An RNA of 177 nucleotides, treated with DMS and 2A3 and read out base by base. For 2A3, 2,466 sequencing reads were counted. DMS (dimethyl sulfate) methylates the pairing face of unpaired adenines and cytosines. It was measured as part of the RMDB library TTRDEL. For DMS, 1,326 sequencing reads were counted.

[RMDB]
RNA sequence: GGGAACGACUCGAGUAGAGUCGAAAAGAUAUGGAGCUUCAGCACAGCAACAGCUCGGAAACGAGACAUGCUGGAUUGACUGGCUCCUAAGUCAAAAGGUCACACCGCCUUCGGGCGGUGUGACCAACAUCUAACGUACGUUCGCGUACGUUAGAUGAAAAGAAACAACAACAACAAC
Reactivity to DMS in 0.01 (KOAc 150mM, MgCl2 10mM, bicine 150mM(pH8.5), 24C), signal-to-noise 2, nucleotides 027 to 126: g000a060u010a300u010g000g000a050g020c040u010u000c000a020g040c300a150c000a010g000c000a030a100c300a180g010c020u010c000g000g000a050a120a260c020g000a000g000a090c070a120u010g020c000u010g000g000a070u000u000g000a100c250u000g020g000c000u020c010c010u000a020a060g010u010c010a080a100a080a150g010g010u000c010a030c000a010c020c020g010c000c040u000u000c220g030g030g130c040g000g020u020g000u000g010a010c000c000a020a040
Reactivity to 2A3 in 0.01 (KOAc 150mM, MgCl2 10mM, bicine 150mM(pH8.5), 24C), signal-to-noise 2, nucleotides 027 to 126: g020a000u080a080u210g000g010a010g010c000u200u170c020a000g000c030a010c000a060g030c010a010a120c030a210g000c020u000c020g000g040a030a050a000c010g010a000g000a060c030a060u090g010c000u010g020g020a140u080u220g070a170c060u060g050g020c000u000c020c000u010a130a010g040u000c020a000a040a070a130g000g020u030c000a010c000a010c030c000g150c000c070u060u150c300g120g000g030c110g000g050u020g020u000g000a000c000c000a000a000